This 177-nucleotide RNA was probed chemically with DMS. Reactivities are given for positions 27 through 126. The reactions ran in a buffer of 150 mM KOAc, 10 mM MgCl2 and 150 mM bicine (pH 8.5), at 24 C. For DMS the reverse transcriptase was MarathonRT.
RNA sequence: GGGAACGACUCGAGUAGAGUCGAAAAGAUAUGGAUAGACACUGACGAAUCCUAACCGGAUGCGAAGAACAGCUUCGGAAACGAAGCUGGGAGCAUCUUUAGGACUAUCAGUGUCUAUCCUAAGUCGCUCUCUUCUCGGGUUCGCCCGAGAAGAGAGAAAAGAAACAACAACAACAAC
Reactivity to DMS in 0.01 (KOAc 150mM, MgCl2 10mM, bicine 150mM(pH8.5), 24C), signal-to-noise 1, nucleotides 027 to 126: g000a100u000a300u010g000g000a000u000a000g040a010c000a000c000u000g010a020c050g030a110a210u000c000c000u020a000a010c300c300g000g020a000u000g000c000g010a110a180g000a140a100c000a020g000c000u010u010c020g010g000a200a050a180c000g010a000a000g000c020u010g000g000g040a140g030c000a000u000c010u000u000u000a000g000g000a020c080u010a220u000c000a010g000u000g000u000c000u000a000u000c000c000u000a020a070g010u000c000g000